[RMDB]
Conditions: 150 mM KOAc, 10 mM MgCl2 and 150 mM bicine (pH 8.5), 24 C. Chemical mapping of a 177-nucleotide RNA with 2A3 and DMS. For 2A3 the reverse transcriptase was SuperScript II with manganese. The data come from the RNA Mapping Database (RMDB), library OK2TRN. For DMS, 1,768 sequencing reads were counted.
RNA sequence: GGGAACGACUCGAGUAGAGUCGAAAAUAACGCCGUAGCGCUUCAUGCGCUGAGCCAGGCUAAUAAAAUUGGCCUGCAAGCUGAUGGGUUGGGCAAGAAGCUGGGUGAUGACGUCGUCAUCGUAAUAGUGACAAUCACAGUUCGCUGUGAUUGUCACAAAAGAAACAACAACAACAAC
Reactivity to 2A3 in 0.01 (KOAc 150mM, MgCl2 10mM, bicine 150mM(pH8.5), 24C), signal-to-noise 1, nucleotides 027 to 126: u090a000a000c020g000c040c040g030u000a000g030c000g020c070u140u190c220a090u180g000c060g000c030u030g000a020g010c020c000a000g010g000c010u010a050a020u100a080a230a030a070u040u020g000g000c040c000u000g020c030a040a020g000c000u080g020a080u100g000g080g000u250u070g040g020g040c010a010a080g050a040a020g030c070u060g060g000g000u140g010a030u040g000a020c050g150u170c000g000u020c050a020u030c020g050u110a010a040u090a120
Reactivity to DMS in 0.01 (KOAc 150mM, MgCl2 10mM, bicine 150mM(pH8.5), 24C), signal-to-noise 2, nucleotides 027 to 126: u000a110a110c130g000c040c100g040u010a050g010c010g020c000u000u020c250a090u020g010c050g000c020u000g020a070g040c110c000a020g010g010c000u000a000a020u020a060a030a000a300u000u010g000g000c000c010u000g000c060a070a040g000c030u000g000a080u010g000g000g010u010u000g010g000g000c080a070a060g000a080a060g040c050u010g000g010g010u000g000a010u010g020a020c040g010u010c110g000u000c050a010u000c020g010u010a000a070u010a150